[RMDB]
RNA sequence: GGGAACGACUCGAGUAGAGUCGAAAAGAUAUGGAGCAAUGUGUCGAUCGAAUAGCUUUUGACGCCUUUACCAUCGGAAACGAUGGAAAGGGCGAUAAGCUACGAUCGACACAUUGCUCCUAAGUCACAUGAAAGAUGAGUUCGCUCAUCUUUCAUGAAAAGAAACAACAACAACAAC
Reactivity to DMS in 0.01 (KOAc 150mM, MgCl2 10mM, bicine 150mM(pH8.5), 24C), signal-to-noise 5, nucleotides 027 to 126: g000a040u010a300u000g010g000a010g000c000a010a000u000g020u000g000u000c000g000a010u000c000g010a180a170u000a000g000c000u010u000u020u010g030a260c090g010c000c010u000u000u000a180c000c000a020u010c000g000g000a120a090a220c010g020a010u000g010g010a040a030a020g010g000g010c000g010a050u000a010a010g010c000u000a060c020g000a010u000c000g010a000c010a000c000a000u000u000g000c000u000c000c000u000a000a050g000u000c030a280